Source information:
Chemical mapping of a 170-nucleotide RNA with 2A3 and DMS. The 2A3 profile rests on 11,571 reads. The reactions ran in a buffer of 150 mM KOAc, 10 mM MgCl2 and 150 mM bicine (pH 8.5), at 24 C. It was measured as part of the RMDB library 15KLIB.

[RMDB]
RNA sequence: GGGAACGACUCGAGUAGAGUCGAAAACAACGGGGCUAGCCGUCAGGUGUUCCUCCCCCCGAGAGGGGAAGAGUGAGGCUUAUCCCGGGGAACUCGGCGAAUCGUCCCCGCAUGGCAGAGACCGAGCAUACCGUUUGCUUCGGCAAACGGAAAAGAAACAACAACAACAAC
Reactivity to 2A3 in 0.01 (KOAc 150mM, MgCl2 10mM, bicine 150mM(pH8.5), 24C), signal-to-noise 5, nucleotides 027 to 129: c040a000a040c000g030g000g000g000c040u020a010g020c000c000g110u040c020a040g070g090u080g120u100u030c010c000u010c000c000c000c010c010c030g150a110g060a130g040g020g020g020a030a000g040a020g030u150g030a000g010g000c000u040u050a040u050c000c000c000g000g000g000g030a000a000c010u010c020g010g000c020g030a020a030u070c010g040u040c000c000c000c000g000c050a080u110g010g000c000a010g020a020g020a160c000c000g020a010g000c000a040u070a160
Reactivity to DMS in 0.01 (KOAc 150mM, MgCl2 10mM, bicine 150mM(pH8.5), 24C), signal-to-noise 4, nucleotides 027 to 129: c100a090a120c000g030g040g050g020c120u020a090g020c040c020g000u030c080a120g010g030u030g000u060u020c040c010u050c000c030c010c000c000c030g010a150g040a180g040g000g050g010a030a110g010a060g030u040g020a260g010g040c050u000u000a120u030c030c010c040g000g020g030g060a010a060c060u000c030g020g000c050g000a000a000u010c060g020u110c030c030c040c020g080c000a000u060g010g000c080a080g000a130g040a110c030c030g020a040g030c040a070u000a120